RNA sequence: GGGAACGACUCGAGUAGAGUCGAAAAAACGAUGUUUUUCAGCCGCUUUGUCCACAAACGUCUUCCCCGCCCGAUCUUCGGGAAAAAUGGAAAUAUCUAUAGGUGAAGACGGUCGCGUGUCUGCAACAGACUAUAGAUUGUUCGCAAUCUAUAGUCUAAAAGAAACAACAACAACAAC
Reactivity to 2A3 in 0.01 (KOAc 150mM, MgCl2 10mM, bicine 150mM(pH8.5), 24C), signal-to-noise 4, nucleotides 027 to 126: a000a000c130g050a130u130g050u050u040u010u050u060c020a010g010c020c020g030c060u140u100u090g070u040c040c010a070c060a100a140a010c050g000u000c000u010u000c020c020c000c010g030c010c010c000g040a070u110c080u200u120c120g010g000g000a070a060a010a000a010u050g010g060a070a100a050u210a040u050c020u040a040u050a100g000g020u020g010a000a010g010a010c030g000g000u050c030g010c010g020u060g040u050c030u030g010c020a050a040c010
Reactivity to DMS in 0.01 (KOAc 150mM, MgCl2 10mM, bicine 150mM(pH8.5), 24C), signal-to-noise 7, nucleotides 027 to 126: a050a050c080g010a110u010g010u010u000u000u000u010c040a060g010c040c020g000c030u000u000u000g010u000c050c040a080c100a070a080a110c030g000u000c010u000u000c000c040c000c060g010c000c000c000g000a100u020c210u010u000c000g000g010g000a000a020a050a090a040u000g010g000a050a150a160u010a090u000c010u000a030u000a060g020g000u000g000a040a030g000a020c010g010g010u000c120g010c030g010u000g010u010c030u000g010c200a100a070c180

This 177-nucleotide RNA was probed chemically with 2A3 and DMS.